[RMDB]
RNA sequence: GGGAACGACUCGAGUAGAGUCGAAAAGCGUACUACUUAUCUGAUGACCAACAGGCACUCUCCAGCUACCCACCUCAUCCCAAAUAGGAUGAGAGGCUGGAGUUGCUGUUGCAAGGAUAAGUAUCGCAAAAGAUCGCUAGGUUCGCCUAGCGAUCAAUCAGCUACAUGAGUUCGCUCAUGUAGCUGAAAAAGAAACAACAACAACAAC
Reactivity to 2A3 in 0.01 (KOAc 150mM, MgCl2 10mM, bicine 150mM(pH8.5), 24C), signal-to-noise 4, nucleotides 027 to 156: g010c020g040u110a070c020u000a000c000u000u000a010u000c000u010g090a160u150g040a260c070c040a010a000c020a020g300g030c020a050c080u180c010u000c010c000a010g000c010u040a120c040c040c080a080c020c000u000c000a000u040c000c000c040a190a300a210u240a140g010g000a000u000g000a000g000a000g000g000c010u010g000g000a000g000u000u010g010c000u000g000u000u010g020c010a060a140g010g000a010u060a010a000g020u010a030u290c000g000c020a040a040a000a080g000a000u010c000g000c000u000a000g060g030u070u070c230g080c060c000u000a000g000c000g000a000u000c000a020a000
Reactivity to DMS in 0.01 (KOAc 150mM, MgCl2 10mM, bicine 150mM(pH8.5), 24C), signal-to-noise 1, nucleotides 027 to 156: g030c010g050u040a080c060u000a050c030u000u000a000u000c030u010g030a220u020g010a190c300c010a010a040c000a110g020g040c000a040c160u000c020u010c010c000a050g010c000u000a050c040c000c030a300c040c000u000c010a030u010c000c030c030a020a200a290u000a030g020g000a030u010g000a010g030a060g050g030c000u010g030g070a020g000u020u000g010c000u020g030u020u000g010c000a160a240g000g000a050u000a000a020g030u010a010u000c010g000c030a110a040a120a140g010a010u000c000g010c000u000a000g010g010u000u010c300g040c000c000u000a000g010c050g000a000u000c000a060a040